[RMDB]
RNA sequence: GGGAACGACUCGAGUAGAGUCGAAAACAGAAAAGUUGAUCGACACAUGAUGACUGCUGUAAAUGUGUAUGAAGGAUCCAGUCUUUUCGUGUUAGAUAAUGACUGGCUUGUUAGUGCUAAUGUGAACUCCAAGGGACCUGUUCGCAGGUCCCUUGGAAAAAGAAACAACAACAACAAC
Reactivity to 2A3 in 0.01 (KOAc 150mM, MgCl2 10mM, bicine 150mM(pH8.5), 24C), signal-to-noise 1, nucleotides 027 to 126: c000a000g210a000a000a000a190g140u170u200g000a010u050c000g010a010c040a000c000a010u070g000a000u170g070a070c000u020g000c100u200g070u020a000a100a000u170g000u020g070u110a110u200g050a040a000g250g000a000u000c000c000a000g000u000c000u000u100u000u040c060g070u070g300u150u140a040g020a020u150a000a170u100g000a000c000u000g010g010c040u070u040g090u000u140a020g040u010g240c200u070a120a110u020g120u000g090a220a030c060
Reactivity to DMS in 0.01 (KOAc 150mM, MgCl2 10mM, bicine 150mM(pH8.5), 24C), signal-to-noise 2, nucleotides 027 to 126: c050a040g010a060a080a080a010g000u020u000g000a020u000c000g000a120c090a050c050a020u000g000a100u020g000a020c000u000g000c000u010g000u010a080a150a080u000g000u020g010u010a040u000g000a040a050g000g020a040u000c010c020a000g000u000c010u000u000u000u010c000g010u070g000u020u040a040g000a010u030a070a020u040g010a020c000u000g010g000c210u000u000g000u000u000a070g000u020g010c090u040a130a100u020g010u000g060a070a090c150
The data come from the RNA Mapping Database (RMDB), library OK1LIB. This 177-nucleotide RNA was probed chemically with 2A3 and DMS. The DMS profile rests on 3,532 reads. The reactions ran in a buffer of 150 mM KOAc, 10 mM MgCl2 and 150 mM bicine (pH 8.5), at 24 C.